Structure probing data (DMS and 2A3) for a 177-nucleotide construct. The DMS profile rests on 9,336 reads. The data come from the RNA Mapping Database (RMDB), library OK1LIB.

RNA sequence: GGGAACGACUCGAGUAGAGUCGAAAAGUCGAGGGCGAGGCGCUGUCCACCCUGGUCGUCAACAAGAUCCGCGGCACCUUCAAGUCGGUGGCGGUCAAGGCUCCCGGCUUCGGCGACCGCCGCAAGGCGGUCGUGACGAGUUCGCUCGUCACGACCGAAAAGAAACAACAACAACAAC
Reactivity to DMS in 0.01 (KOAc 150mM, MgCl2 10mM, bicine 150mM(pH8.5), 24C), signal-to-noise 5, nucleotides 027 to 126: g020u010c060g020a080g000g000g020c040g020a060g000g010c090g020c060u040g000u020c050c050a070c060c040c020u010g000g020u000c040g020u010c060a100a120c190a120a080g000a080u020c040c100g020c070g020g000c020a090c080c040u000u000c160a100a060g000u030c080g000g030u000g000g000c020g010g030u020c150a100a140g000g000c020u010c100c000c010g010g000c020u000u000c060g010g010c070g020a070c060c030g020c010c000g000c120a080a100g030g010
Reactivity to 2A3 in 0.01 (KOAc 150mM, MgCl2 10mM, bicine 150mM(pH8.5), 24C), signal-to-noise 9, nucleotides 027 to 126: g050u050c020g020a050g020g020g040c050g050a070g030g010c090g040c210u100g060u090c020c020a150c050c030c000u020g040g010u030c030g030u040c030a040a060c040a210a090g030a150u050c040c040g000c020g040g000c020a040c040c000u100u130c110a090a040g040u080c040g040g010u030g010g000c020g000g050u060c060a070a040g100g000c020u030c010c000c000g020g010c000u060u040c030g010g000c020g030a070c010c040g000c000c010g020c030a020a030g100g000
Reactivities are rounded to 0.1 and cut off at 0 and 3.